[RMDB]
Conditions: 150 mM KOAc, 10 mM MgCl2 and 150 mM bicine (pH 8.5), 24 C.
This 177-nucleotide RNA was probed chemically with DMS and 2A3.
For 2A3, 3,718 sequencing reads were counted.
For DMS the reverse transcriptase was MarathonRT.
RNA sequence: GGGAACGACUCGAGUAGAGUCGAAAAGAGUGAGCCAAGGAUAAGCGUGGUCCCUGGCAGGGUGCAGGAUUCUAUCCUGAAAUACACCCCCUCCACUUUCUCCUAUUCCAGUCCACCGGGGCCUCUCCCUAAAGAGCACGUUCGCGUGCUCUUUAGGAAAAGAAACAACAACAACAAC
Reactivity to DMS in 0.01 (KOAc 150mM, MgCl2 10mM, bicine 150mM(pH8.5), 24C), signal-to-noise 2, nucleotides 027 to 126: g010a020g020u000g030a160g000c030c020a070a070g020g000a020u000a030a070g040c060g050u000g000g020u020c000c000c040u000g000g000c110a090g010g000g000u020g020c060a030g000g010a010u000u030c150u060a050u000c000c000u000g020a000a020a130u000a300c010a060c050c000c000c020c060u010c050c050a050c050u040u010u000c120u000c000c070u000a110u010u030c020c060a040g000u000c050c030a030c050c040g000g000g010g040c060c030u010c050u030c050
Reactivity to 2A3 in 0.01 (KOAc 150mM, MgCl2 10mM, bicine 150mM(pH8.5), 24C), signal-to-noise 4, nucleotides 027 to 126: g100a000g030u110g020a020g000c000c010a020a030g000g000a050u060a140a050g030c050g060u060g070g010u060c040c000c000u000g020g010c050a020g020g000g000u010g010c000a010g020g010a030u300u140c060u160a090u090c000c000u000g000a050a030a010u220a020c000a000c000c000c000c010c000u090c030c020a030c000u020u030u020c070u020c010c000u040a080u100u030c010c010a010g050u010c000c010a030c030c030g020g000g030g000c000c010u000c020u010c010
About this RNA: For 2A3 the reverse transcriptase was SuperScript II with manganese.